[RMDB]
RNA sequence: GGGAACGACUCGAGUAGAGUCGAAAAGCAUUCAACUGUUUUCAACAGAAGUCUCCAAAAUUGGUACUCAUCCAGGGUUAUGUUAACUGCCCAGUGUACCGAAGGGUGAUGUGGACAGGUGGAAAAAGACUGGGUUAAUCUCUUAGUGAGACUAAGAGCGACCUAUUUAUUUCGAUAAAUAGGUCGCAAAAGAAACAACAACAACAAC
Reactivity to DMS in 0.01 (KOAc 150mM, MgCl2 10mM, bicine 150mM(pH8.5), 24C), signal-to-noise 1, nucleotides 027 to 156: g040c030a100u010u010c080a050a130c010u000g040u010u010u000u000c090a080a170c020a040g000a100a080g030u000c000u030c050c000a000a020a160a230u000u000g020g010u000a050c020u010c020a020u000c060c050a170g020g010g030u000u020a050u010g020u010u010a060a120c260u000g030c030c000c010a040g040u010g010u000a090c010c010g000a060a060g000g050g010u000g030a130u000g030u000g010g030a060c060a060g000g000u000g040g020a020a080a050a110a090g020a080c010u020g030g030g000u020u010a020a050u000c030u000c000u000u020a170g020u020g010a070g010a110c060u000a060a110g040a240
Reactivity to 2A3 in 0.01 (KOAc 150mM, MgCl2 10mM, bicine 150mM(pH8.5), 24C), signal-to-noise 2, nucleotides 027 to 156: g000c030a060u080u110c020a070a030c010u010g030u070u080u110u140c060a100a080c010a130g090a150a020g070u000c020u040c070c060a010a080a140a140u150u030g020g000u020a020c000u010c050a150u090c090c070a090g000g000g060u060u110a120u140g100u090u150a080a080c050u060g000c000c010c020a000g030u010g010u020a020c010c010g040a020a010g030g000g000u030g020a040u080g000u060g000g030a060c030a030g080g000u030g090g060a100a100a000a000a000g080a010c050u030g000g000g020u000u010a050a080u040c050u000c000u030u030a000g000u050g160a040g030a070c010u040a050a010g040a000